[RMDB]
RNA sequence: GGGAACGACUCGAGUAGAGUCGAAAAUGCUGGAACUUUGCGGCCCUAAGCACUGGAGAUGACCCUUGAGGGAGGUUUCACUCUGCAGAGAUCUCUCCCCCGUCGCGUGGCGGGUGGGAACACGUUAAUCGAUAGCAGGGUUCGCCCUGCUAUCGAUAAAAGAAACAACAACAACAAC
Reactivity to DMS in 0.01 (KOAc 150mM, MgCl2 10mM, bicine 150mM(pH8.5), 24C), signal-to-noise 1, nucleotides 027 to 126: u040g020c110u000g020g020a030a040c030u030u000u000g000c100g000g000c100c040c000u000a120a190g010c190a080c000u000g000g000a110g020a050u020g000a110c040c010c040u000u030g030a120g000g000g000a070g000g000u000u010u000c070a000c090u000c040u020g000c000a040g000a010g000a020u010c030u010c010u000c000c010c000c030c000g010u000c140g000c260g020u030g000g000c000g000g010g030u030g000g000g000a090a050c100a060c060g000u020u010a060
Reactivity to 2A3 in 0.01 (KOAc 150mM, MgCl2 10mM, bicine 150mM(pH8.5), 24C), signal-to-noise 2, nucleotides 027 to 126: u090g000c030u050g050g010a040a050c030u030u060u090g030c050g030g030c000c010c010u030a070a060g000c040a040c070u060g030g030a020g030a120u080g050a070c000c000c060u070u150g040a180g030g000g030a020g070g020u000u000u010c010a000c010u000c000u030g000c010a030g020a090g060a220u040c010u010c000u030c030c000c000c000c000g030u000c020g030c070g100u150g000g000c000g000g000g000u150g000g040g000a000a050c060a020c050g040u090u140a030
An RNA of 177 nucleotides, treated with DMS and 2A3 and read out base by base. The reactions ran in a buffer of 150 mM KOAc, 10 mM MgCl2 and 150 mM bicine (pH 8.5), at 24 C. It was measured as part of the RMDB library RFM100.